This 177-nucleotide RNA was probed chemically with DMS and 2A3. For 2A3 the reverse transcriptase was SuperScript II with manganese. The data come from the RNA Mapping Database (RMDB), library 15KREP. For 2A3, 883 sequencing reads were counted. For DMS the reverse transcriptase was MarathonRT.

RNA sequence: GGGAACGACUCGAGUAGAGUCGAAAACAGGCUGUUUUAGUUUUGCCAAGAUGUUAUUUAUGCUUCCACUAGCUUACUUUAGUGAUUCAAAACUCGGCACCACAGAGGUUAAAGUGAGUGCUUUGAAGUGUACCUACAUGUUCGCAUGUAGGUACACAAAAGAAACAACAACAACAAC
Reactivity to DMS in 0.01 (KOAc 150mM, MgCl2 10mM, bicine 150mM(pH8.5), 24C), signal-to-noise 2, nucleotides 027 to 126: c070a110g000g030c040u000g020u000u010u010u000a050g020u000u000u020u010g010c070c060a060a140g000a070u000g040u000u020a060u000u020u000a040u020g020c030u020u000c040c020a060c070u010a060g000c060u010u000a060c180u010u020u000a050g010u000g000a160u000u010c120a050a030a080a080c030u010c070g010g000c050a030c040c010a020c070a130g000a070g010g000u020u020a020a050a120g000u000g010a080g010u000g000c060u000u010u000g010a030a150
Reactivity to 2A3 in 0.01 (KOAc 150mM, MgCl2 10mM, bicine 150mM(pH8.5), 24C), signal-to-noise 1, nucleotides 027 to 126: c040a010g100g000c030u050g110u080u060u030u070a050g000u000u080u180u070g040c000c020a010a020g050a110u060g000u170u030a120u060u110u000a090u080g010c010u060u000c050c020a020c000u000a010g050c020u070u060a050c030u140u030u050a040g030u050g090a060u120u000c100a030a040a080a060c020u040c050g000g010c030a010c010c010a020c030a020g100a090g140g090u130u130a040a030a020g010u010g030a150g000u000g050c000u000u020u090g050a050a020